Conditions: 150 mM KOAc, 10 mM MgCl2 and 150 mM bicine (pH 8.5), 24 C. The record gives the reactivity of an RNA of 207 nucleotides to DMS and 2A3.
RNA sequence: GGGAACGACUCGAGUAGAGUCGAAAAACGGGCGGAUAGUGAGGUAGCUCGUGGCUGCAGGGAAAGAGGUCGGCCGCCUAAGUAUCAAGGUGACCCCUGACCUCGACGGGUUCUACCGAGAGCUGAAGGCGGCUGUCGAGGCCGCCGAGAAGAUGAAUGUAAAGAGAUGAUUCGUCAUCUCUUUACAAAAAGAAACAACAACAACAAC
Reactivity to DMS in 0.01 (KOAc 150mM, MgCl2 10mM, bicine 150mM(pH8.5), 24C), signal-to-noise 4, nucleotides 027 to 156: a060c030g030g020g020c040g010g000a100u000a070g020u050g000a100g030g020u000a110g020c050u000c080g030u010g010g030c020u000g030c060a080g020g020g000a090a120a150g010a060g010g010u010c040g010g040c010c030g010c000c000u000a070a100g010u010a140u000c080a080a180g020g030u000g000a070c010c010c020c010u000g010a080c060c020u000c040g020a060c070g000g000g010u010u000c040u000a070c020c010g000a280g000a100g010c030u000g000a110a160g000g020c000g030g030c000u000g000u000c090g000a240g000g030c010c010g040c030c010g000a060g000a080a120g010a140u000g020a090a200
Reactivity to 2A3 in 0.01 (KOAc 150mM, MgCl2 10mM, bicine 150mM(pH8.5), 24C), signal-to-noise 3, nucleotides 027 to 156: a000c030g020g010g050c040g030g030a050u050a080g090u100g050a030g010g060u050a010g000c000u010c070g020u030g030g000c020u040g000c020a050g010g020g050a100a120a060g040a060g020g030u040c020g030g000c010c020g000c000c020u050a080a020g060u090a160u300c090a070a020g000g010u050g030a110c010c000c000c050u060g050a070c020c040u080c070g000a010c020g010g010g000u090u070c020u070a040c020c000g010a030g010a000g040c020u030g020a050a010g020g000c030g000g000c000u010g030u050c020g010a060g000g020c020c000g000c030c010g000a010g000a050a010g020a030u100g020a130a080